[RMDB]
RNA sequence: GGGAACGACUCGAGUAGAGUCGAAAAACGGCUUACGAGCCGAACAUGUCGGGCAUUGCGUAGGCGUUGUGCACAGUGUUCUUUAAAUUACAAUUGUGCAUCUCAUCCACGUAAAUCACGGCACUAAUCAUUUAUCGGUAUUCGUACCGAUAAAUGAAAAAGAAACAACAACAACAAC
Reactivity to 2A3 in 0.01 (KOAc 150mM, MgCl2 10mM, bicine 150mM(pH8.5), 24C), signal-to-noise 9, nucleotides 027 to 126: a000c020g010g010c010u050u050a060c190g060a030g000c000c000g010a010a030c060a050u050g010u010c010g000g030g020c140a060u020u030g000c010g000u020a110g000g010c010g010u010u020g000u000g000c000a000c000a010g020u010g050u100u090c070u080u270u200a150a280a180u160u120a040c060a050a160u060u020g000u000g000c000a020u010c010u000c010a100u020c000c000a010c010g010u020a060a080a040u040c030a040c040g010g010c010a010c060u110a090a070
Reactivity to DMS in 0.01 (KOAc 150mM, MgCl2 10mM, bicine 150mM(pH8.5), 24C), signal-to-noise 9, nucleotides 027 to 126: a130c020g010g000c010u000u020a090c180g010a040g010c000c010g010a080a090c180a130u000g010u000c010g020g010g040c210a100u000u000g000c020g010u000a050g010g010c300g010u000u000g010u000g010c000a010c000a020g020u000g000u000u000c200u020u010u040a060a110a080u020u020a020c030a030a060u020u000g010u000g000c010a010u000c050u000c010a050u000c010c030a030c010g010u000a010a060a060u010c040a130c010g000g000c020a050c170u010a070a140
About this RNA: Conditions: 150 mM KOAc, 10 mM MgCl2 and 150 mM bicine (pH 8.5), 24 C. Structure probing data (2A3 and DMS) for a 177-nucleotide construct. DMS adducts were read by reverse transcription with MarathonRT. Reactivities are given for positions 27 through 126.